Record summary: Structure probing data (2A3 and DMS) for a 177-nucleotide construct. For DMS the reverse transcriptase was MarathonRT.
RNA sequence: GGGAACGACUCGAGUAGAGUCGAAAAGGGAGAUCCGAGCAGAGGCAUAGCGAACUGCGCACGGCGAAGCCUUGAGGGAAUGCCGUAGGACCCGGGUUCGAUUCCCGGCAGCUCCACCGAAGGGCCAACUAGCUCCCUCAUUCGUGAGGGAGCUAGUAAAAGAAACAACAACAACAAC
Reactivity to 2A3 in 0.01 (KOAc 150mM, MgCl2 10mM, bicine 150mM(pH8.5), 24C), signal-to-noise 2, nucleotides 027 to 126: g100g010g000a050g000a020u000c020c000g000a010g000c010a020g010a080g100g110c060a040u110a030g030c010g060a090a070c050u050g030c030g030c040a010c000g000g000c020g030a050a040g060c000c000u050u060g080a110g040g030g050a090a060u080g030c000c000g040u030a030g010g000a000c010c000c010g020g020g000u030u090c020g000a050u110u110c000c000c000g000g000c010a020g000c000u010c000c030a070c000c010g030a080a020g010g010g000c000c000a030
Reactivity to DMS in 0.01 (KOAc 150mM, MgCl2 10mM, bicine 150mM(pH8.5), 24C), signal-to-noise 2, nucleotides 027 to 126: g000g020g000a020g010a010u010c000c060g050a260g010c090a050g000a070g000g010c050a070u020a220g000c080g010a030a060c120u010g000c000g040c080a040c040g030g020c010g020a070a170g010c020c000u020u000g020a170g050g010g070a090a080u010g030c010c010g020u000a060g000g000a150c090c010c000g000g000g000u000u000c170g000a290u020u010c000c020c000g000g000c240a040g020c020u000c020c010a150c060c040g000a160a040g000g000g000c000c170a090
For DMS, 2,331 sequencing reads were counted.
It was measured as part of the RMDB library OK1LIB.
The reactions ran in a buffer of 150 mM KOAc, 10 mM MgCl2 and 150 mM bicine (pH 8.5), at 24 C.
Values cover nucleotides 27 to 126.